[RMDB]
RNA sequence: GGGAACGACUCGAGUAGAGUCGAAAAGAUAUGGACUGCUGGGAGUUGGCCAUGGCGACGAAGUUAAGCUGUCGGAAACGACAGCUUAACAGAGCCAUGGUCAACUUUGAUCAGCAGUCCUAAGUCAGUUUUUUGUUUAGUUCGCUAAACAAAAAACAAAAGAAACAACAACAACAAC
Reactivity to DMS in 0.01 (KOAc 150mM, MgCl2 10mM, bicine 150mM(pH8.5), 24C), signal-to-noise 2, nucleotides 027 to 126: g000a050u010a300u000g010g010a010c010u000g000c000u000g040g000g010a020g000u000u010g020g020c000c000a000u000g000g010c010g040a200c260g000a110a160g000u000u000a010a010g010c010u000g010u000c000g000g000a130a120a200c000g000a030c000a080g000c010u010u020a000a010c010a040g020a220g010c000c000a000u010g010g020u000c000a000a020c000u000u000u010g000a150u020c010a000g020c000a000g000u000c000c000u000a010a060g000u010c060a180
Chemical mapping of a 177-nucleotide RNA with DMS. The RNA was probed in 150 mM KOAc, 10 mM MgCl2 and 150 mM bicine (pH 8.5) at 24 C. DMS adducts were read by reverse transcription with MarathonRT.